[RMDB]
RNA sequence: GGGAACGACUCGAGUAGAGUCGAAAAUGAGAUAUCAGUGGAGAUAUUUCUGAAGUCCACAAAAUUUAUCGUGAAGAUGAAUAAACAUAAUAUUUCAUUUAUGUCAGCACAAUUUUUAUUAGUGGAUGUGUGUUUUUGAGUCAUUUUUGUGAUGUAAUCAUCAACAGCGAUUCGUCGCUGUUGAUGAAAAAGAAACAACAACAACAAC
Reactivity to 2A3 in 0.01 (KOAc 150mM, MgCl2 10mM, bicine 150mM(pH8.5), 24C), signal-to-noise 1, nucleotides 027 to 156: u050g000a000g000a000u020a040u000c020a050g140u190g110g050a160g000a040u020a010u060u120u000c050u040g110a110a000g140u010c000c000a000c020a000a150a030a000u020u050u000a000u070c040g050u050g120a000a140g020a070u020g070a090a000u020a110a190a040c050a050u250a190a000u040a230u040u150u170c000a000u110u070u110a040u090g000u040c020a000g070c070a000c040a050a020u000u070u140u110u070a230u210u110a040g020u090g050g030a110u040g120u000g000u020g000u070u000u040u000u300g070a000g020u000c110a110u000u120u150u060u150g050u000g040a040u160g000u250a030a030